Record summary:
Conditions: 150 mM KOAc, 10 mM MgCl2 and 150 mM bicine (pH 8.5), 24 C. Structure probing data (2A3) for a 207-nucleotide construct. The 2A3 profile rests on 1,417 reads. 2A3 is a SHAPE reagent: it acylates the 2'-hydroxyl of flexible nucleotides of all four kinds. For 2A3 the reverse transcriptase was SuperScript II with manganese.
RNA sequence: GGGAACGACUCGAGUAGAGUCGAAAACUACACCAGGAACCUGGAGAACCCCGACUUCGCCACCGGAACACCGGAGGCCGACCAGGCCUUCCUGCGCGAUCUCGUGGCGUUCUACGUGAUCUUCGAGGGGAUGUGGUUCUACACCGGCUUCGCGCAGCUCUUGGAUGAAAUUCGUUUCAUCCAAGAGAAAAGAAACAACAACAACAAC
Reactivity to 2A3 in 0.01 (KOAc 150mM, MgCl2 10mM, bicine 150mM(pH8.5), 24C), signal-to-noise 1, nucleotides 027 to 156: c020u060a070c020a040c030c020a030g190g050a070a100c010c000u030g010g060a060g040a090a100c070c000c000c000g070a100c060u070u060c040g000c030c070a040c020c050g040g020a120a020c060a020c070c030g010g010a010g000g000c000c000g070a110c100c090a010g000g000c000c000u060u040c000c000u060g010c040g000c000g050a030u010c030u000c030g020u050g000g000c010g000u020u010c030u090a060c040g080u060g060a100u070c020u140u050c070g110a070g000g000g010g030a020u060g020u030g050g000u060u000c000u060a010c030a040c030c020g050g010c030u000u050c010g000c000g000c010a030g020